[RMDB]
RNA sequence: GGGAACGACUCGAGUAGAGUCGAAAAGGCGAAGAAGUCCUUCAGGGAUCCCCAGGGAAACCUGGAGGAAGUCCGACGAGAUCGCGGCUGGGGCUUAGGACCCCACUCCUGCGGGACAGGAGUAAUCCUAGGAAUUGUAGUUCGCUACAAUUCCUAGAAAAGAAACAACAACAACAAC
Reactivity to DMS in 0.01 (KOAc 150mM, MgCl2 10mM, bicine 150mM(pH8.5), 24C), signal-to-noise 2, nucleotides 027 to 126: g030g010c020g000a070a100g000a100a060g000u000c000c010u000u000c010a020g010g000g000a270u000c010c000c010c170a200g010g010g010a010a040a270c000c000u000g000g000a010g000g030a010a020g000u000c000c020g000a120c030g010a210g010a100u000c010g020c020g010g000c060u010g000g020g000g000c050u000u000a120g010g000a210c000c000c010c030a040c000u000c000c000u000g010c050g000g010g020a260c070a010g000g010a010g000u010a050a040u010c110
Reactivity to 2A3 in 0.01 (KOAc 150mM, MgCl2 10mM, bicine 150mM(pH8.5), 24C), signal-to-noise 1, nucleotides 027 to 126: g050g000c040g040a030a010g040a060a030g160u010c000c000u000u000c000a010g010g000g060a010u030c010c000c020c090a110g050g010g000a000a050a020c010c010u010g000g000a000g000g010a010a010g010u000c020c010g000a030c050g060a050g050a070u080c020g010c030g070g000c050u040g020g000g030g000c030u120u080a110g100g080a180c000c000c000c000a000c000u000c000c000u000g010c110g190g080g000a080c010a010g000g010a030g020u040a010a070u000c000